This 177-nucleotide RNA was probed chemically with 2A3 and DMS.
The RNA was probed in 150 mM KOAc, 10 mM MgCl2 and 150 mM bicine (pH 8.5) at 24 C.
The 2A3 profile rests on 2,183 reads.
DMS adducts were read by reverse transcription with MarathonRT.
Reactivities are rounded to 0.1 and cut off at 0 and 3.

RNA sequence: GGGAACGACUCGAGUAGAGUCGAAAAUCUGGUCGCGAGGUUGAUCUUAGUGGCGAACAAACUUGUGUUGCCUAUCGUAAAGAUCGAUUCAACCUUAUUAAAAUGGAGAUCUUUUGGCUCUCUCCUAAUGAGGAAAUCUUUUCGAAGAUUUCCUCAUAAAAGAAACAACAACAACAAC
Reactivity to 2A3 in 0.01 (KOAc 150mM, MgCl2 10mM, bicine 150mM(pH8.5), 24C), signal-to-noise 3, nucleotides 027 to 126: u010c030u100g090g040u070c010g040c080g100a020g030g010u030u040g010a020u010c010u040u130a070g030u040g110g000c010g050a010a020c050a020a100a150c050u200u140g060u020g020u120u040g030c010c010u040a050u090c020g030u040a060a080a080g020a040u040c030g020a010u080u030c010a000a010c000c010u020u040a120u040u140a100a110a040a040u170g050g000a000g010a010u050c040u020u060u020u040g040g000c020u010c000u000c010u030c000c000u040a110
Reactivity to DMS in 0.01 (KOAc 150mM, MgCl2 10mM, bicine 150mM(pH8.5), 24C), signal-to-noise 4, nucleotides 027 to 126: u000c050u010g000g020u000c070g030c200g010a040g010g010u000u010g010a020u010c040u000u010a100g030u000g000g020c010g000a020a020c030a070a180a150c280u020u010g010u000g010u020u000g000c020c000u000a050u010c100g010u010a080a080a090g010a010u000c130g000a120u020u010c040a040a040c020c000u000u000a110u010u010a040a050a070a090u000g010g010a030g010a050u000c060u000u000u010u010g000g000c020u010c030u010c040u000c020c060u000a080